[RMDB]
RNA sequence: GGGAACGACUCGAGUAGAGUCGAAAAGGUUGGCGGGGCUCAGGGCCUCCACGAAGGCCUUGGCCCGCUCCAACAUCGUGCGGCCCUGCAGCGUCACCGUCUCGGCGAUGGAGAGGCAGGGAAAGAGGCCGUUGGCCACCCCGGUGAAGCCGUAGACAAGGAUGAAAAGAUUCGUCUUUUCAUCCUUAAAAGAAACAACAACAACAAC
Reactivity to DMS in 0.01 (KOAc 150mM, MgCl2 10mM, bicine 150mM(pH8.5), 24C), signal-to-noise 2, nucleotides 027 to 156: g000g030u000u010g010g020c110g030g020g020g030c040u010c030a060g040g050g010c000c000u000c030c070a070c260g030a070a050g020g020c000c000u000u020g030g020c010c010c000g010c030u000c000c020a050a170c000a060u000c030g000u000g010c050g010g000c010c000c000u020g000c030a100g020c050g020u000c000a040c000c030g000u000c050u000c170g030g000c020g000a070u000g000g000a130g010a090g000g000c030a100g000g000g000a010a050a110g020a170g000g010c020c020g010u000u000g030g010c030c010a080c000c000c000c000g010g020u000g000a090a120g010c010c020g010u010a080g010a160c170
Reactivity to 2A3 in 0.01 (KOAc 150mM, MgCl2 10mM, bicine 150mM(pH8.5), 24C), signal-to-noise 2, nucleotides 027 to 156: g120g010u000u000g010g010c040g000g000g020g000c090u130c210a020g000g000g000c010c010u000c090c020a180c140g250a200a020g000g000c000c060u000u000g010g010c020c010c000g050c010u000c000c000a020a020c010a010u130c080g110u080g030c010g020g000c000c000c000u000g020c010a040g060c020g100u090c030a020c010c030g100u070c020u070c140g140g000c080g030a040u070g080g010a080g010a020g060g100c040a040g010g000g060a100a060a000g090a010g020g010c020c020g160u180u230g040g000c000c000a030c030c030c000c010g000g000u050g020a030a000g020c030c010g030u040a000g020a020c040
This 207-nucleotide RNA was probed chemically with DMS and 2A3. For DMS, 7,046 sequencing reads were counted. Values cover nucleotides 27 to 156. Reactivities are rounded to 0.1 and cut off at 0 and 3. As a SHAPE reagent, 2A3 marks flexible, mostly unpaired nucleotides at the ribose 2'-OH. DMS adducts were read by reverse transcription with MarathonRT.